[RMDB]
RNA sequence: GGGAACGACUCGAGUAGAGUCGAAAAUUGAAGUAGAAUUUCCUUUUUACAAUAAAGGAAGGAUUGGCUAUUCUAGGCUUAUUAGAGCUCAAGAUUUAGAUUGUCCAUCUACUAGUUCAUGGUUUGCCACUGGAUUGGAUUACGCUUUUCGUCAGGGCUGUCACUUAUAUUUCGAUAUAAGUGACAGAAAAGAAACAACAACAACAAC
Reactivity to 2A3 in 0.01 (KOAc 150mM, MgCl2 10mM, bicine 150mM(pH8.5), 24C), signal-to-noise 4, nucleotides 027 to 156: u060u080g010a060a000g030u040a010g010a150a160u030u050u060c000c000u010u000u020u080u170a140c100a070a090u130a120a010a000g010g000a010a020g010g020a030u060u090g040g000c010u030a030u080u020c000u020a030g030g000c020u050u070a110u170u210a290g070a040g020c030u030c100a120a040g030a100u050u110u140a050g020a080u040u090g010u000c010c010a010u020c020u030a040c010u020a030g070u020u040c030a050u070g030g080u060u050u080g040c020c020a080c030u030g010g030a040u040u080g060g000a020u040u120a040c100g030c050u080u100u060u070c050g050u020c040a020g030g010g080
Reactivity to DMS in 0.01 (KOAc 150mM, MgCl2 10mM, bicine 150mM(pH8.5), 24C), signal-to-noise 3, nucleotides 027 to 156: u000u020g000a100a100g000u000a060g000a110a240u010u000u000c010c010u020u010u020u000u000a180c180a120a160u010a040a040a050g020g020a040a080g030g010a060u000u010g010g010c050u000a060u010u010c020u000a090g000g020c010u010u000a120u010u010a140g010a030g020c000u000c030a070a080g010a120u000u000u000a040g020a100u000u010g010u000c010c010a300u000c020u000a050c030u000a070g000u000u000c050a050u010g020g010u010u000u000g010c020c010a120c070u000g010g000a100u000u000g060g010a160u040u020a080c120g040c020u010u000u000u000c050g000u000c070a120g030g010g010
Notes:
The data come from the RNA Mapping Database (RMDB), library OK3TST. An RNA of 207 nucleotides, treated with 2A3 and DMS and read out base by base. DMS adducts were read by reverse transcription with MarathonRT. The 2A3 profile rests on 2,427 reads. Conditions: 150 mM KOAc, 10 mM MgCl2 and 150 mM bicine (pH 8.5), 24 C.